[RMDB]
RNA sequence: GGGAACGACUCGAGUAGAGUCGAAAAACCACAUCUAAGGAAGCCAGCAGGCUCGGGGAGAUAGUGACGAAAAAUAACAAUACAGGACUCAUAGCCGAGGCCCUGUAAUUGGAAUGAGUACACUUUAUGAUUGGACUAGUUUCGACUAGUCCAAUCAAAAAGAAACAACAACAACAAC
Reactivity to 2A3 in 0.01 (KOAc 150mM, MgCl2 10mM, bicine 150mM(pH8.5), 24C), signal-to-noise 3, nucleotides 027 to 126: a030c020c000a030c010a020u010c030u110a030a030g030g030a050a020g100c010c000a040g030c030a070g120g000c020u000c000g140g000g000g000a050g000a010u110a040g060u060g010a020c060g180a020a020a070a010a000u160a070a010c010a000a010u030a000c010a010g000g000a000c000u000c020a090u130a100g110c110c060g020a000g000g010c120c000c000u010g030u030a040a100u000u000g000g090a090a090u080g040a040g010u110a090c020a010c080u110u030u020a020
Reactivity to DMS in 0.01 (KOAc 150mM, MgCl2 10mM, bicine 150mM(pH8.5), 24C), signal-to-noise 3, nucleotides 027 to 126: a210c020c020a090c180a120u070c020u020a080a110g020g020a180a040g000c030c010a160g020c150a150g010g050c020u010c060g000g000g000g000a050g010a040u010a010g000u000g020a030c100g060a010a080a070a040a040u030a030a100c030a000a000u000a010c050a000g000g000a300c000u040c030a030u020a150g000c270c070g000a030g010g000c060c000c000u000g000u000a000a020u000u010g000g010a110a050u000g000a120g000u000a060c160a090c010u010u000u000a070
Notes:
An RNA of 177 nucleotides, treated with 2A3 and DMS and read out base by base.